[RMDB]
RNA sequence: GGGAACGACUCGAGUAGAGUCGAAAACAACAUUGUGGUUACAGGGCAAGCUAGCCAAGACCUACAAAAGUGAUUGGCUUUCCAGAUGAAAAAGGACAGCUGUUUUGACAUUCUUGUACAAAGAUACGAAUAGCACAUACUUCGGUAUGUGCUAUUCAAAAGAAACAACAACAACAAC
Reactivity to DMS in 0.01 (KOAc 150mM, MgCl2 10mM, bicine 150mM(pH8.5), 24C), signal-to-noise 5, nucleotides 027 to 126: c080a070a130c100a090u020u010g030u000g020g010u000u010a130c130a140g000g020g010c020a090a130g010c080u000a090g020c020c020a060a080g000a150c240c040u010a060c150a040a040a110a070g010u000g000a130u000u030g010g020c020u000u000u000c020c020a090g000a100u010g000a030a060a060a100a080g010g000a030c180a070g010c040u000g010u000u000u000u000g010a080c110a080u000u000c020u000u000g000u020a060c190a070a040a080g000a080u000a090c210
Reactivity to 2A3 in 0.01 (KOAc 150mM, MgCl2 10mM, bicine 150mM(pH8.5), 24C), signal-to-noise 3, nucleotides 027 to 126: c010a040a000c010a090u080u060g040u060g100g000u060u050a050c080a150g040g010g040c010a050a030g120c040u090a040g000c000c000a030a010g030a010c000c040u100a060c060a030a080a040a030g090u090g060a140u100u130g000g010c000u000u040u000c010c010a060g010a260u200g050a060a100a080a000a010g040g020a000c000a010g000c010u030g030u060u160u050u050g050a040c030a040u090u010c020u080u070g060u070a050c050a110a140a000g040a040u070a070c060